Overview
Conditions: 150 mM KOAc, 10 mM MgCl2 and 150 mM bicine (pH 8.5), 24 C. An RNA of 177 nucleotides, treated with DMS and 2A3 and read out base by base. DMS adducts were read by reverse transcription with MarathonRT. The 2A3 profile rests on 14,131 reads. 2A3 is a SHAPE reagent: it acylates the 2'-hydroxyl of flexible nucleotides of all four kinds.
RNA sequence: GGGAACGACUCGAGUAGAGUCGAAAAGCACCGCCGCAGUGCAGCCAACCACCAACCGCACACACGCUGCCCGAGCCUGCUCCUGUCGCAGUCGUACCCGGUCCGGGGCCGGACCCGGGUAGGCGUACGACUCCAGUAUAUUCGUAUACUGGAGUCGAAAAGAAACAACAACAACAAC
Reactivity to DMS in 0.01 (KOAc 150mM, MgCl2 10mM, bicine 150mM(pH8.5), 24C), signal-to-noise 7, nucleotides 027 to 126: g000c050a080c030c040g020c060c040g020c050a090g020u010g010c040a100g010c050c050a080a090c060c020a080c060c050a070a090c070c050g000c050a070c100a090c120a050c060g010c020u000g000c040c030c010g000a080g000c020c020u000g010c030u000c010c020u000g010u000c040g020c100a070g010u000c030g020u000a030c010c000c000g020g010u010c010c010g010g000g020g030c150c040g010g000a030c050c030c030g010g000g010u000a010g010g010c050g010u000a120
Reactivity to 2A3 in 0.01 (KOAc 150mM, MgCl2 10mM, bicine 150mM(pH8.5), 24C), signal-to-noise 5, nucleotides 027 to 126: g000c000a020c030c030g070c040c020g040c060a030g030u040g040c010a010g050c010c030a040a060c030c020a030c010c010a060a040c030c020g030c020a020c000a000c010a000c090g010c020u030g020c000c010c020g020a020g040c010c010u020g010c000u020c010c010u050g050u070c030g000c150a050g020u030c030g130u040a030c010c000c000g000g010u020c010c010g010g010g180g080c100c040g060g030a090c100c190c010g010g000g000u010a040g020g000c020g010u030a030